[RMDB]
RNA sequence: GGGAACGACUCGAGUAGAGUCGAAAAACAUAAUGAGACCGGGUGAGGAGAUUGACAAAUCAGAAUCCUACACACCUUAUUUGAGGGACAUGAGAUUAUGCCGCAAAUCACCUUAUUCUACAACCAACCAAACGACGUACUUCGGUACGUCGUUUGGAAAAGAAACAACAACAACAAC
Reactivity to 2A3 in 0.01 (KOAc 150mM, MgCl2 10mM, bicine 150mM(pH8.5), 24C), signal-to-noise 2, nucleotides 027 to 126: a000c030a020u180a010a050u170g030a050g070a100c070c100g000g060g000u050g020a020g000g000a050g070a060u080u140g050a130c050a020a080a020u100c070a060g060a010a030u000c020c000u070a040c070a000c000a000c010c100u110u090a180u140u090u240g010a140g080g000g040a000c020a030u240g020a020g010a070u020u050a060u130g000c010c000g000c010a000a000a000u000c000a010c000c000u000u030a060u170u000c030u100a090c050a090a030c020c030a030a080
Structure probing data (2A3) for a 177-nucleotide construct. The RNA was probed in 150 mM KOAc, 10 mM MgCl2 and 150 mM bicine (pH 8.5) at 24 C.